Structure probing data (DMS) for a 177-nucleotide construct. The reactions ran in a buffer of 150 mM KOAc, 10 mM MgCl2 and 150 mM bicine (pH 8.5), at 24 C. DMS adducts were read by reverse transcription with MarathonRT.

RNA sequence: GGGAACGACUCGAGUAGAGUCGAAAAGAUAUGGACCACCUGGGACAUGACCGAUUGUGUCGGAAACGACAUAGAGGUCAACAGCCCAUGGUGGUCCUAAGUCAAAAUCCCUUACUUCGGUAAGGGAGAGAGUUGUACUCUUCGGAGUACAACUCUCAAAAGAAACAACAACAACAAC
Reactivity to DMS in 0.01 (KOAc 150mM, MgCl2 10mM, bicine 150mM(pH8.5), 24C), signal-to-noise 2, nucleotides 027 to 126: g000a030u000a300u010g000g030a030c000c000a000c000c010u000g000g000g020a000c120a300u000g010a010c040c000g000a300u010u010g050u000g020u010c000g020g000a060a050a230c010g000a030c020a020u000a050g000a300g020g000u000c000a070a080c250a150g020c000c000c000a020u010g020g030u010g000g000u010c000c000u000a010a010g000u000c020a080a040a110a280u020c000c000c000u010u000a000c000u000u020c200g030g020u000a000a020g000g000g000a030